[RMDB]
Conditions: 150 mM KOAc, 10 mM MgCl2 and 150 mM bicine (pH 8.5), 24 C. Chemical mapping of a 207-nucleotide RNA with 2A3 and DMS.
RNA sequence: GGGAACGACUCGAGUAGAGUCGAAAACUGGUCCAAUAUGUGAAUCGUCUGAUAUAUUUGCUGAGGGUCGAUCAAUCUCAGCGCCAACGCGUGGUGAUAUUAUUGCAAUUGGGACUGCAGGAGCAUAUGGAUAUGAGAUGGCAAGCACAUACAAUGCGAUGAUACCAAGAUUCGUCUUGGUAUCAUCAAAAGAAACAACAACAACAAC
Reactivity to 2A3 in 0.01 (KOAc 150mM, MgCl2 10mM, bicine 150mM(pH8.5), 24C), signal-to-noise 7, nucleotides 027 to 156: c060u080g030g020u030c010c010a050a070u120a070u140g050u040g050a070a080u070c060g080u040c080u060g120a030u040a010u020a040u200u120u130g000c020u010g010a040g030g040g060u130c110g060a090u110c070a090a070u040c010u000c020a000g010c000g010c040c020a110a080c080g050c050g070u060g010g030u040g040a060u040a090u220u070a080u050u140g030c080a080a060u050u070g020g010g030a010c030u040g020c030a020g040g030a010g020c020a030u050a050u170g020g030a010u000a040u140g050a050g030a020u050g020g000c020a040a020g080c030a020c020a030u180a040c090a110a050u200g050c110
Reactivity to DMS in 0.01 (KOAc 150mM, MgCl2 10mM, bicine 150mM(pH8.5), 24C), signal-to-noise 2, nucleotides 027 to 156: c060u000g030g000u020c060c010a070a160u000a120u000g010u000g010a080a070u000c070g010u010c060u010g020a130u000a120u010a110u000u010u010g010c020u010g020a090g010g000g000u020c040g040a120u010c080a050a200u000c030u010c040a040g000c000g020c070c040a040a060c070g040c070g050u010g010g040u010g000a110u010a080u000u000a090u000u020g000c050a060a120u000u000g000g000g010a080c050u000g030c050a100g000g010a130g040c050a060u010a080u010g000g020a060u010a110u000g010a080g000a150u000g000g000c020a050a070g020c030a060c020a090u010a090c090a040a070u000g010c280

For 2A3 the reverse transcriptase was SuperScript II with manganese. For DMS, 4,327 sequencing reads were counted. In probing experiments dimethyl sulfate is read out at A N1 and C N3, which are open when not base-paired. DMS adducts were read by reverse transcription with MarathonRT.